[RMDB]
Overview:
Chemical mapping of a 177-nucleotide RNA with DMS and 2A3. The RNA was probed in 150 mM KOAc, 10 mM MgCl2 and 150 mM bicine (pH 8.5) at 24 C. For DMS the reverse transcriptase was MarathonRT. For 2A3, 1,063 sequencing reads were counted. Source: RMDB library OK2TRN, as collected in RNAgym.
RNA sequence: GGGAACGACUCGAGUAGAGUCGAAAAAAGUUCGUUAUGCUUUUGAAGUUAAGUUCAAUAUUGCUUUAGUUUUAUCUAUUAAUAAGUCAAAUGUUGAUUUUGACUUUGAUUUCAUUUUAAAGACUGAACGUACUACUAUCUUCGGAUAGUAGUACGUAAAAGAAACAACAACAACAAC
Reactivity to DMS in 0.01 (KOAc 150mM, MgCl2 10mM, bicine 150mM(pH8.5), 24C), signal-to-noise 2, nucleotides 027 to 126: a100a040g010u010u000c100g010u000u000a020u000g010c040u000u000u000u000g010a000a020g010u000u000a010a030g010u000u000c000a010a020u000a020u010u000g000c010u000u000u000a040g000u000u000u010u020a080u030c040u010a110u030u000a100a080u020a030a020g000u010c030a030a010a020u000g020u000u000g010a030u000u000u000u010g020a000c000u000u000u000g000a020u000u000u000c020a010u010u000u010u020a070a080a140g010a060c030u000g020a110
Reactivity to 2A3 in 0.01 (KOAc 150mM, MgCl2 10mM, bicine 150mM(pH8.5), 24C), signal-to-noise 1, nucleotides 027 to 126: a000a000g070u060u000c040g050u090u010a010u040g000c010u070u040u000u010g010a010a010g000u010u040a020a000g000u040u020c000a000a000u000a010u020u020g000c030u040u020u020a050g000u160u170u270u110a120u110c060u050a100u120u060a290a160u140a160a000g020u100c050a040a000a050u020g000u000u040g010a000u060u010u050u020g000a000c000u070u000u000g010a010u030u010u010c000a020u100u040u040u150a170a170a020g010a010c020u020g060a030